An RNA of 177 nucleotides, treated with 2A3 and DMS and read out base by base. Conditions: 150 mM KOAc, 10 mM MgCl2 and 150 mM bicine (pH 8.5), 24 C. As a SHAPE reagent, 2A3 marks flexible, mostly unpaired nucleotides at the ribose 2'-OH. DMS adducts were read by reverse transcription with MarathonRT. DMS (dimethyl sulfate) methylates the pairing face of unpaired adenines and cytosines.

RNA sequence: GGGAACGACUCGAGUAGAGUCGAAAAGUGCGAGCGCAUGCUUGUAAGUUGCACCAAGGAAUUUAAGUCUGUGGUCGUGUCUUUGAAUGAGAAGGCUGAACAGUUCUUUUCUUUUGGCGACUACGUGGUCUAUUUAUACGUUCGCGUAUAAAUAGACAAAAGAAACAACAACAACAAC
Reactivity to 2A3 in 0.01 (KOAc 150mM, MgCl2 10mM, bicine 150mM(pH8.5), 24C), signal-to-noise 7, nucleotides 027 to 126: g080u050g000c010g020a040g010c060g010c110a090u300g010c030u040u030g020u040a050a080g040u040u090g020c050a050c060c020a020a030g100g040a130a110u150u210u210a150a060g060u010c070u100g030u040g040g030u020c020g050u020g080u040c060u070u110u150g060a090a050u050g010a050g000a070a010g010g000c020u050g070a120a030c030a060g040u210u240c000u030u030u020u020c000u030u100u040u060g050g000c010g000a010c000u040a020c040g100u090g040
Reactivity to DMS in 0.01 (KOAc 150mM, MgCl2 10mM, bicine 150mM(pH8.5), 24C), signal-to-noise 8, nucleotides 027 to 126: g020u000g010c030g010a030g020c030g020c200a060u010g020c030u010u000g010u000a060a080g010u000u000g010c070a140c030c040a090a100g010g010a080a070u010u010u010a070a120g010u010c050u010g020u000g010g010u000c020g010u000g010u000c050u000u000u010g010a080a070u010g000a050g010a010a030g000g010c010u000g010a070a080c130a020g010u000u010c010u000u000u000u000c010u000u000u000u010g010g010c030g000a050c020u000a030c060g030u000g010